[RMDB]
RNA sequence: GGGAACGACUCGAGUAGAGUCGAAAAUUUAAUGCUUUUACUUCCUUCUGCUCUCAUGAAUUGUGCUUGGUGAGCUCCAUAUUCUUGUAAGGUACAUUUUCCAUGAAGUUUUUGAAUAUAUCCUUCUCCUAAAGGAUAGAAUUCACCAAAAUGAGGACAUAGAUUGAGGGUUCGCCCUCAAUCUAUGAAAAGAAACAACAACAACAAC
Reactivity to DMS in 0.01 (KOAc 150mM, MgCl2 10mM, bicine 150mM(pH8.5), 24C), signal-to-noise 1, nucleotides 027 to 156: u000u000u010a040a170u000g020c030u010u000u000u000a120c040u000u010c000c000u000u000c030u000g000c050u000c070u000c030a080u000g000a030a070u000u000g030u010g010c070u000u000g000g030u000g020a080g000c140u020c020c110a120u000a070u010u000c030u000u000g030u000a090a050g000g010u000a060c070a110u000u010u000u000c030c030a050u010g000a080a110g010u010u000u000u000u000g000a070a040u000a050u000a010u010c000c000u010u000c020u010c180c160u000a070a050a060g000g000a040u000a020g010a110a080u000u000c010a070c130c070a040a060a030a110u000g000a160g000g050a250
Reactivity to 2A3 in 0.01 (KOAc 150mM, MgCl2 10mM, bicine 150mM(pH8.5), 24C), signal-to-noise 2, nucleotides 027 to 156: u120u120u130a120a080u120g040c060u030u130u040u080a100c020u100u010c010c000u020u050c040u070g040c000u000c000u020c040a060u080g060a050a040u130u060g030u030g030c030u050u030g010g020u080g110a020g040c030u030c010c010a100u070a120u220u110c040u050u130g030u070a080a110g010g030u070a020c000a040u130u170u040u020c090c010a030u020g070a090a060g040u030u020u010u150u160g020a040a020u020a010u000a010u040c010c000u030u010c070u060c020c040u100a130a020a010g000g010a000u000a000g020a090a070u010u000c020a020c000c040a060a030a050a080u160g040a020g030g020a000

Structure probing data (DMS and 2A3) for a 207-nucleotide construct. The RNA was probed in 150 mM KOAc, 10 mM MgCl2 and 150 mM bicine (pH 8.5) at 24 C. It was measured as part of the RMDB library OK3TST. For DMS, 2,145 sequencing reads were counted.